[RMDB]
RNA sequence: GGGAACGACUCGAGUAGAGUCGAAAAGAAGAGAAGCGCGCGAAUUGGAAACCAGCGAACCCUAUUACGCGCGCAAGGAACCGGGCCUUGGUUCCUUGGAAAGAAUAGAUAAUUUCGCUGGUAAAGAAUUAUAUCCCUCCUUCGGGAGGGAUAUAAUAAAAGAAACAACAACAACAAC
Reactivity to DMS in 0.01 (KOAc 150mM, MgCl2 10mM, bicine 150mM(pH8.5), 24C), signal-to-noise 3, nucleotides 027 to 126: g000a180a090g010a260g010a140a160g000c020g000c000g020c070g030a100a120u010u010g000g020a150a170a010c010c000a010g000c010g010a020a040c210c050c040u010a020u000u000a060c020g020c010g040c010g000c000a010a010g000g000a010a000c000c000g010g000g030c130c090u050u020g020g010u000u000c000c000u000u000g000g000a110a130a120g000a030a040u020a030g010a120u020a090a090u000u000u000c000g000c000u000g010g010u020a040a110a120g020a120
Reactivity to 2A3 in 0.01 (KOAc 150mM, MgCl2 10mM, bicine 150mM(pH8.5), 24C), signal-to-noise 1, nucleotides 027 to 126: g060a060a080g050a010g010a150a060g020c000g040c000g000c000g020a040a050u080u030g040g070a080a190a090c000c000a000g010c000g010a020a060c040c010c000u000a010u000u070a050c010g080c010g020c000g000c000a000a000g000g000a000a000c000c030g070g200g060c060c050u120u120g040g000u000u010c020c040u010u000g000g110a070a060a000g040a010a060u170a050g030a020u130a090a100u050u020u060c000g000c020u000g000g020u060a000a000a030g010a020

Chemical mapping of a 177-nucleotide RNA with DMS and 2A3. For 2A3, 673 sequencing reads were counted. Source: RMDB library OK1LIB, as collected in RNAgym. The RNA was probed in 150 mM KOAc, 10 mM MgCl2 and 150 mM bicine (pH 8.5) at 24 C.